Conditions: 150 mM KOAc, 10 mM MgCl2 and 150 mM bicine (pH 8.5), 24 C. This 177-nucleotide RNA was probed chemically with 2A3 and DMS. Source: RMDB library OK1LIB, as collected in RNAgym. DMS adducts were read by reverse transcription with MarathonRT. Values cover nucleotides 27 to 126.
RNA sequence: GGGAACGACUCGAGUAGAGUCGAAAAUUUCACCUUAGCAAGAGUCGAUUUUGACCUGGCACUAGCACUGAUCCUACUUUUUUAUUAUGUGCCUGCGAAAAUUGAGCAGCUGGGGUAUUAGGUAGGACAUGGUACGCAUGUUCGCAUGCGUACCAUGAAAAGAAACAACAACAACAAC
Reactivity to 2A3 in 0.01 (KOAc 150mM, MgCl2 10mM, bicine 150mM(pH8.5), 24C), signal-to-noise 5, nucleotides 027 to 126: u090u140u060c060a090c030c000u010u070a010g000c070a170a080g110a030g120u010c020g150a300u080u040u100u300g070a070c030c010u000g010g000c000a000c020u050a030g030c060a080c160u070g070a130u010c000c000u030a020c030u090u040u070u030u050u140a150u130u050a070u180g010u010g000c010c000u000g020c000g060a130a050a040a130u160u240g060a030g000c010a000g000c000u050g030g000g000g040u030a060u050u050a030g000g010u000a020g000g000a000
Reactivity to DMS in 0.01 (KOAc 150mM, MgCl2 10mM, bicine 150mM(pH8.5), 24C), signal-to-noise 2, nucleotides 027 to 126: u040u020u080c050a090c000c000u010u000a080g000c000a110a050g020a110g050u000c030g040a180u050u000u030u020g000a130c150c000u000g020g000c000a020c000u020a120g030c150a110c080u000g010a090u000c020c000u000a020c030u000u010u010u030u020u000a040u120u010a070u040g030u000g010c000c000u010g000c030g000a030a010a140a110u020u050g000a300g060c060a050g000c020u000g000g020g000g030u000a030u000u020a040g000g030u010a010g000g020a240